Structure probing data (2A3 and DMS) for a 170-nucleotide construct. The 2A3 profile rests on 2,339 reads. Values cover nucleotides 27 to 129.

RNA sequence: GGGAACGACUCGAGUAGAGUCGAAAAUUUUUCAUAUGAUGGGUUACGUGGCGCAAUACGUAAAGCUAAAGAUUAUGGUUUUACUGUUUUUGUGUGCACAGACAACUCUGCUAACACUAAAGUUCUUAUGCGCGGGAGUUCGCUCCCGCGAAAAGAAACAACAACAACAAC
Reactivity to 2A3 in 0.01 (KOAc 150mM, MgCl2 10mM, bicine 150mM(pH8.5), 24C), signal-to-noise 1, nucleotides 027 to 129: u000u000u000u030u000c040a010u080a000u260g080a050u030g000g000g080u000u000a000c050g070u020g000g020c000g000c000a000a000u000a000c000g000u000a000a000a000g000c000u000a020a020a120g150a030u270u200a100u040g000g000u000u000u000u000a010c020u130g000u010u090u040u120u040g000u000g000u100g100c030a010c000a000g010a010c020a000a000c000u000c000u050g170c030u010a100a000c000a000c150u030a000a250a000g000u000u000c000u000u000a010u080g000
Reactivity to DMS in 0.01 (KOAc 150mM, MgCl2 10mM, bicine 150mM(pH8.5), 24C), signal-to-noise 2, nucleotides 027 to 129: u050u000u000u130u000c060a080u020a140u030g000a170u050g010g020g040u010u010a180c300g010u000g000g020c020g030c030a040a010u030a000c010g000u000a000a000a000g000c000u000a010a090a040g000a170u060u030a110u000g000g000u100u010u000u000a030c000u040g000u000u000u000u000u000g000u050g070u040g040c020a080c000a080g000a060c140a010a020c020u010c030u030g020c190u020a060a070c240a120c130u090a040a120a130g000u030u030c060u010u020a080u060g000